Chemical mapping of a 207-nucleotide RNA with 2A3. Conditions: 150 mM KOAc, 10 mM MgCl2 and 150 mM bicine (pH 8.5), 24 C.
RNA sequence: GGGAACGACUCGAGUAGAGUCGAAAAGGAUCAUCAGAGCAUCUAAGAGAUGCUUCUCUCACCCCAUCACCAGCUCUGAGGUUCAGGACAAAAAAUUGGACAGUGGCAGUCCAUUCGUUCAUUCCUUUAUUCCUCUGUCAGGCUGUCAUUCAUUGUAAGUUAUUUCGUGGUUCGCCACGAAAUAACUAAAAGAAACAACAACAACAAC
Reactivity to 2A3 in 0.01 (KOAc 150mM, MgCl2 10mM, bicine 150mM(pH8.5), 24C), signal-to-noise 1, nucleotides 027 to 156: g040g000a050u060c030a020u030c080a120g010a000g050c000a030u000c100u230a300a010g030a000g010a130u010g010c000u140u070c020u000c000u000c010a100c010c050c000c030a100u120c080a010c080c000a030g000c030u010c020u060g020a010g040g010u020u030c040a000g000g030a010c130a040a060a000a000a050a040u170u070g000g000a010c000a020g030u000g020g070c030a020g070u000c000c010a010u020u010c040g000u060u030c000a040u080u080c000c000u030u050u080a040u080u070c000c030u000c000u050g110u160c000a080g080g000c020u030g000u120c020a080u090u100c040a070u050u240g080u110a010

For 2A3 the reverse transcriptase was SuperScript II with manganese.